RNA sequence: GGGAACGACUCGAGUAGAGUCGAAAAGAGUUCGCCGGAGACUCGUAAAACGCCGGCACCUAAACAUACACGCCAACGACAGAGAGAUGGCGCUGGCUGCCUAAAACCACUGGCAGCCCGUCGGUCCGGGCGGCCCACGGCCCGGUUUCCGGCGUCGCAAGACAUUGACCUUCGGGUCAAUGUCUUGAAAAGAAACAACAACAACAAC
Reactivity to 2A3 in 0.01 (KOAc 150mM, MgCl2 10mM, bicine 150mM(pH8.5), 24C), signal-to-noise 1, nucleotides 027 to 156: g000a000g000u030u030c020g000c010c030g000g000a070g050a000c000u010c000g090u110a010a040a010a020c010g000c010c010g000g020c010a080c010c020u130a100a070a100c080a030u220a060c050a000c010g000c000c010a080a040c050g110a060c140a160g120a020g000a010g020a120u010g010g000c020g030c030u010g000g000c000u000g020c000c000u130a230a190a080a100c060c020a130c160u030g000g000c000a000g000c000c000c000g010u000c000g000g020u010c000c000g000g000g030c000g000g000c000c000c000a060c010g040g000c050c000c000g020g000u000u060u000c000c000g010g000c010g000u010c020g000